[RMDB]
RNA sequence: GGGAACGACUCGAGUAGAGUCGAAAAGUGAGCGGCCCGCAGCGAGACUGGCAGUUCAGGCGAACCAUCUUGGUCGUAGCCCAGAAUCUCUUCUUCAAGGACGGCAGAACGGCGGGCACGCAGCUGCAGCCGAAUAGCACGACCUUGGCCAUCAUGACACGAGCUAUUCAUUCGUGAAUAGCUCGUGAAAAGAAACAACAACAACAAC
Reactivity to 2A3 in 0.01 (KOAc 150mM, MgCl2 10mM, bicine 150mM(pH8.5), 24C), signal-to-noise 1, nucleotides 027 to 156: g090u060g030a060g020c060g020g020c010c020c030g000c020a000g090c050g010a030g010a060c010u040g000g000c000a010g010u080u100c110a040g100g000c030g030a040a060c030c000a070u130c040u040u220g010g000u000c050g030u010a040g000c000c010c010a010g050a050a030u020c000u020c000u300u000c040u250u180c010a020a040g000g010a020c000g000g000c000a060g030a190a040c030g010g000c000g010g090g050c000a000c000g180c000a030g010c010u160g070c020a050g000c000c000g030a110a080u100a080g040c040a060c200g000a050c000c000u000u000g030g000c030c030a070u180c010a090u230g040a050
The record gives the reactivity of an RNA of 207 nucleotides to 2A3. Reactivities are given for positions 27 through 156. The RNA was probed in 150 mM KOAc, 10 mM MgCl2 and 150 mM bicine (pH 8.5) at 24 C.